[RMDB]
RNA sequence: GGGAACGACUCGAGUAGAGUCGAAAAUGUUUGGAAUCAAUUUAAGCAGAGAUUUGCAGAACAACACAACAUGCAUUGCGUGUUUGUGGAGUUUAGCAUAUUACUUUGAGUUAAUCGGCGUGUUCCAGCCUUACAGCAAAUUCGUUUGCUGUAAGGCAAAAGAAACAACAACAACAAC
Reactivity to 2A3 in 0.01 (KOAc 150mM, MgCl2 10mM, bicine 150mM(pH8.5), 24C), signal-to-noise 6, nucleotides 027 to 126: u130g020u040u030u080g070g020a040a040u070c060a080a080u060u040u100a050a020g080c010a000g010a000g000a050u000u000u030g010c040a040g010a020a010c010a000a000c010a000c000a010a000c010a000u020g020c090a180u040u300g010c010g000u020g020u060u140u100g010u000g010g000a020g010u000u010u010a020g000c010a010u030a030u080u090a100c020u040u020u020g040a070g090u080u120a070a040u100c080g050g010c090g030u080g030u030u000c000c010a000
Reactivity to DMS in 0.01 (KOAc 150mM, MgCl2 10mM, bicine 150mM(pH8.5), 24C), signal-to-noise 5, nucleotides 027 to 126: u020g010u020u000u010g000g000a040a020u010c050a100a050u010u000u000a020a060g000c000a020g000a050g010a100u010u000u000g000c000a300g020a010a010c000a020a190c010a000c000a000a010c000a010u010g010c010a250u020u020g010c000g020u000g010u010u010u010g020u000g000g000a260g000u000u000u020a120g010c010a000u020a020u010u000a040c000u000u000u000g000a050g000u010u000a020a030u000c190g000g010c150g010u060g020u000u020c000c010a140